[RMDB]
About this RNA
Chemical mapping of a 207-nucleotide RNA with DMS and 2A3. The RNA was probed in 150 mM KOAc, 10 mM MgCl2 and 150 mM bicine (pH 8.5) at 24 C. Source: RMDB library OK3TST, as collected in RNAgym.
RNA sequence: GGGAACGACUCGAGUAGAGUCGAAAAAGUGGACGAUACAUUACACCGAGCAAUUAAAUUACUGUCCACGCUCGGACAUUAUUCUGGCGAGAGCCAGUUCACAGACAGCUAGCGAAAGGAAGGACCUAGCAGGAAGGAAGGCGCUAGCGCUAGGACAAAUAUCAUCCCGAUUCGUCGGGAUGAUAUUAAAAGAAACAACAACAACAAC
Reactivity to DMS in 0.01 (KOAc 150mM, MgCl2 10mM, bicine 150mM(pH8.5), 24C), signal-to-noise 1, nucleotides 027 to 156: a170g020u000g010g000a120c070g000a110u000a040c020a200u000u010a080c040a170c030c000g000a050g070c030a080a090u000u000a010a190a110u000u000a090c090u000g000u000c050c010a070c060g030c000u020c010g080g000a050c090a050u010u030a130u010u030c000u030g050g010c040g020a220g040a240g040c070c010a070g010u000u000c060a080c030a130g010a020c040a160g020c010u000a080g070c000g040a160a030a060g050g030a060a080g000g000a120c040c020u020a090g050c030a090g020g020a070a110g040g000a060a130g000g050c010g040c050u000a040g040c000g030c030u000a010g000g000a180c060a060
Reactivity to 2A3 in 0.01 (KOAc 150mM, MgCl2 10mM, bicine 150mM(pH8.5), 24C), signal-to-noise 1, nucleotides 027 to 156: a000g020u010g000g020a020c040g040a040u070a120c090a080u140u100a070c110a050c050c000g020a000g020c020a030a100u110u120a180a030a070u150u090a110c030u090g000u000c010c000a020c010g000c000u000c000g000g000a030c000a050u200u210a100u160u000c020u000g000g010c000g010a040g000a010g030c010c000a000g000u080u020c090a040c020a020g080a020c040a020g010c010u000a000g000c030g020a000a040a010g030g010a030a060g060g010a030c000c000u020a020g010c030a020g040g080a120a000g070g020a000a020g030g010c000g000c030u020a010g020c000g010c030u020a010g000g040a000c030a040

The 2A3 profile rests on 752 reads.